Structure probing data (DMS) for a 177-nucleotide construct.
DMS (dimethyl sulfate) methylates the pairing face of unpaired adenines and cytosines.

[RMDB]
RNA sequence: GGGAACGACUCGAGUAGAGUCGAAAAAAAAAGAUAUGGAGUUAGACAUGCUCCCGAUGGGCCGAGGUGGAUCGGAAACGAUCCACUAUCCCAUUAGGGAGCAACAGCUAACUCCUAAGUCAAAAAACCUUAAUUCUAUCUUCGGAUAGAAUUAAGGAAAAGAAACAACAACAACAAC
Reactivity to DMS in 0.01 (KOAc 150mM, MgCl2 10mM, bicine 150mM(pH8.5), 24C), signal-to-noise 2, nucleotides 027 to 126: a090a050a100a160a090g010a030u020a300u000g030g000a000g030u000u000a000g010a030c060a300u000g000c000u010c000c000c040g000a010u000g010g000g000c300c200g000a160g000g020u000g000g000a010u020c030g000g020a160a110a100c020g000a020u000c000c000a020c010u000a080u020c000c000c000a050u000u000a090g050g010g000a000g020c010a000a020c240a160g000c020u000a020a020c000u000c010c000u010a000a030g000u040c030a020a070a100a070a100a080

Annotation
Conditions: 150 mM KOAc, 10 mM MgCl2 and 150 mM bicine (pH 8.5), 24 C.